An RNA of 170 nucleotides, treated with DMS and 2A3 and read out base by base.
For 2A3 the reverse transcriptase was SuperScript II with manganese.
It was measured as part of the RMDB library 15KLIB.
RNA sequence: GGGAACGACUCGAGUAGAGUCGAAAACUACUUUCUUACACAGAUUCUAUUCACUUAAGGCUGCAGUCCAUGGGUGGAAGAUGGUUGUGUGUGAUAAGGUACGUUCUCUCAAAUUGAGUGAUAAUAAUGGCUAGUGCCUUCGGGCACUAGAAAAGAAACAACAACAACAAC
Reactivity to DMS in 0.01 (KOAc 150mM, MgCl2 10mM, bicine 150mM(pH8.5), 24C), signal-to-noise 2, nucleotides 027 to 129: c090u000a030c010u000u000u000c000u000u010a040c000a030c030a060g000a160u020u010c020u030a180u010u030c010a000c010u020u020a120a110g030g040c040u080g000c160a150g000u040c010c050a000u000g030g000g030u020g000g060a020a060g000a040u010g000g050u030u030g020u010g000u030g060u030g020a020u060a030a060g050g000u070a070c160g030u090u020c040u010c010u030c130a060a070a090u000u000g010a020g010u040g020a070u070a000a000u060a060a090u080g000g000
Reactivity to 2A3 in 0.01 (KOAc 150mM, MgCl2 10mM, bicine 150mM(pH8.5), 24C), signal-to-noise 5, nucleotides 027 to 129: c030u030a010c000u040u000u000c000u010u060a000c010a000c010a040g090a040u110u000c010u060a300u030u010c000a000c000u050u020a090a040g000g000c030u240g160c260a050g060u060c000c000a030u130g030g000g000u000g010g020a000a000g010a010u100g080g020u120u110g110u000g000u000g000u000g080a020u010a060a010g020g000u020a020c090g020u060u000c060u000c010u020c130a110a190a100u160u180g050a060g080u090g110a080u110a300a050u130a040a070u170g110g020